Conditions: 150 mM KOAc, 10 mM MgCl2 and 150 mM bicine (pH 8.5), 24 C. An RNA of 207 nucleotides, treated with DMS and 2A3 and read out base by base. For DMS, 4,315 sequencing reads were counted. For 2A3 the reverse transcriptase was SuperScript II with manganese. Reactivities are given for positions 27 through 156. For 2A3, 2,352 sequencing reads were counted.
RNA sequence: GGGAACGACUCGAGUAGAGUCGAAAAGUACAUAUAUGUAUGCUUUUAUGCACAGACAUAAACAGAUAUACACACAUAAAGAAUAUCUCUUAACUAUGUAUAGACUACUAAUAGAUUUUAAAUUUCGGAAGACGUAUUUUAGAAUUUGUGAGUUAGGCGUACUAAUGACAUUCGUGUCAUUAGUACGAAAAGAAACAACAACAACAAC
Reactivity to DMS in 0.01 (KOAc 150mM, MgCl2 10mM, bicine 150mM(pH8.5), 24C), signal-to-noise 2, nucleotides 027 to 156: g010u000a050c040a050u010a080u000a040u000g010u000a040u000g010c010u000u000u020u000a050u020g010c020a210c280a220g020a130c000a050u000a020a020a050c070a050g020a170u000a030u000a010c010a030c010a060c090a090u000a090a070a180g030a070a090u000a090u000c050u000c020u000u000a090a160c050u000a040u000g010u000a060u010a110g010a130c010u000a020c020u000a030a020u000a030g000a040u020u000u020u010a010a030a060u000u000u000c010g000g010a120a110g010a130c040g010u000a030u000u000u010u000a000g000a010a030u000u000u010g030u000g000a040g010u010u000a030g020g000
Reactivity to 2A3 in 0.01 (KOAc 150mM, MgCl2 10mM, bicine 150mM(pH8.5), 24C), signal-to-noise 4, nucleotides 027 to 156: g050u040a040c030a030u100a010u050a070u160g000u010a010u040g000c010u060u030u000u010a020u020g010c060a080c070a290g220a090c010a030u030a000a020a000c070a030g070a040u050a010u030a020c020a010c010a000c020a050u170a190a130a030g070a100a040u090a130u110c040u020c000u110u060a080a030c040u040a050u110g000u020a040u050a070g050a060c000u020a010c000u020a100a050u040a120g010a010u000u000u020u040a050a030a070u110u190u090c030g010g040a090a040g110a030c000g020u030a030u010u040u020u000a030g010a030a050u010u010u040g020u010g020a030g020u020u090a040g060g000